An RNA of 177 nucleotides, treated with DMS and 2A3 and read out base by base. DMS adducts were read by reverse transcription with MarathonRT. The DMS profile rests on 1,399 reads. The 2A3 profile rests on 848 reads. The data come from the RNA Mapping Database (RMDB), library OK1LIB.
RNA sequence: GGGAACGACUCGAGUAGAGUCGAAAAAACAUAUGGAACUAGAAAAAACUCCUGAAGAUGAUAUAUUCAUUCAUUAUCCUAAAGGCGGUAUUGAAGGAUAUAGCCAAAAAACAUGGACUAUAGCAACUGUAUUCAAAGCUUUCGAGCUUUGAAUACAAAAAGAAACAACAACAACAAC
Reactivity to DMS in 0.01 (KOAc 150mM, MgCl2 10mM, bicine 150mM(pH8.5), 24C), signal-to-noise 1, nucleotides 027 to 126: a080a040c170a100u030a040u000g000g030a170a160c020u000a220g030a000a100a020a060a030a130c170u000c000c000u000g000a070a130g040a150u010g020a140u000a000u000a000u020u000c040a090u010u020c000a030u020u000a020u020c030c020u000a050a090a090g030g000c080g010g000u000a020u000u030g020a010a010g010g000a010u000a000u000a000g000c100c020a000a000a100a110a070a070c140a030u000g000g000a030c070u000a050u000a010g000c140a060a030c250
Reactivity to 2A3 in 0.01 (KOAc 150mM, MgCl2 10mM, bicine 150mM(pH8.5), 24C), signal-to-noise 2, nucleotides 027 to 126: a010a000c100a090u240a170u140g020g020a100a020c030u040a090g110a030a270a010a000a110a110c050u070c010c020u040g100a010a030g070a060u050g010a000u040a000u000a010u030u080c040a090u030u000c010a020u030u000a030u000c030c030u140a140a060a000g300g000c180g020g010u020a000u010u030g010a010a000g040g000a000u000a000u010a020g040c070c030a080a100a000a040a060a000c040a010u080g020g000a000c050u060a110u110a150g020c000a030a060c170